[RMDB]
The record gives the reactivity of an RNA of 177 nucleotides to DMS and 2A3. For 2A3 the reverse transcriptase was SuperScript II with manganese. For DMS the reverse transcriptase was MarathonRT. It was measured as part of the RMDB library OK2TST. For 2A3, 800 sequencing reads were counted.

RNA sequence: GGGAACGACUCGAGUAGAGUCGAAAAGCUCCGUGCGCCGCGCCGGGCCGCCAUCGGUCAUGAUCUUCACGAUAUCAUAGGCGCGCGCCUCAUCGAGCGAACGAAUGGUCAUCGCGAUAUAGGCGAAAGUGCUUUUAGUCUUCGGACUAAAAGCACUAAAAGAAACAACAACAACAAC
Reactivity to DMS in 0.01 (KOAc 150mM, MgCl2 10mM, bicine 150mM(pH8.5), 24C), signal-to-noise 1, nucleotides 027 to 126: g020c020u000c020c090g030u000g000c300g000c040c040g000c000g010c040c050g010g020g020c040c010g000c200c230a170u000c000g000g020u000c040a070u020g000a060u000c080u000u040c230a120c300g000a100u000a030u010c050a130u010a170g020g030c000g010c040g020c050g010c010c030u000c050a060u010c180g000a020g000c010g000a040a070c170g010a040a070u000g030g020u000c090a110u000c010g000c040g000a070u010a130u020a090g030g000c020g000a030a070
Reactivity to 2A3 in 0.01 (KOAc 150mM, MgCl2 10mM, bicine 150mM(pH8.5), 24C), signal-to-noise 1, nucleotides 027 to 126: g030c000u000c010c040g030u000g040c050g030c010c020g000c020g010c000c000g000g030g010c000c020g090c080c100a250u300c080g000g020u000c040a080u110g010a010u000c020u150u190c140a020c160g110a070u070a020u120c010a050u040a160g000g010c000g000c020g000c020g000c030c010u010c010a090u130c050g040a000g010c010g000a000a020c020g110a080a110u100g070g000u080c000a040u030c090g010c000g060a050u050a040u090a260g130g070c000g000a030a070